[RMDB]
RNA sequence: GGGAACGACUCGAGUAGAGUCGAAAAGCUUUUGCGUACAGUCAGAUGAGGCCUCAUGUUCGUUACGACUUGUAUGAUGGUAACAUGUUUAUUAAAUUUCCUGAAGUAGUAUUUGAAAGUACACUUAAUACAGCAUGCUUCGGCAUGCUGAAAAGAAACAACAACAACAAC
Reactivity to DMS in 0.01 (KOAc 150mM, MgCl2 10mM, bicine 150mM(pH8.5), 24C), signal-to-noise 4, nucleotides 027 to 129: g010c040u000u000u000u000g020c060g060u020a020c180a060g070u010c060a110g010a060u040g010a000g030g020c030c040u010c050a050u010g030u050u000c110g030u010u050a110c130g090a050c070u040u040g030u050a040u060g010a090u090g040g000u010a060a070c160a070u000g030u010u070u060a110u000u070a100a070a080u000u000u000c050c020u050g090a000a000g000u040a090g040u010a000u000u000u060g040a020a050a090g010u000a060c000a050c060u010u050a050a070u050a060
Reactivity to 2A3 in 0.01 (KOAc 150mM, MgCl2 10mM, bicine 150mM(pH8.5), 24C), signal-to-noise 4, nucleotides 027 to 129: g020c000u020u030u110u070g020c040g020u060a010c000a020g020u030c040a060g000a120u100g060a060g050g070c010c010u040c010a020u060g040u100u070c070g070u060u010a050c150g000a000c040u060u110g030u020a050u080g040a010u060g010g020u040a040a000c020a110u070g070u060u060u060a210u030u170a110a100a070u000u010u040c010c000u000g000a000a000g010u060a010g020u020a090u010u010u130g080a080a020a020g030u030a000c010a000c020u030u010a030a050u130a060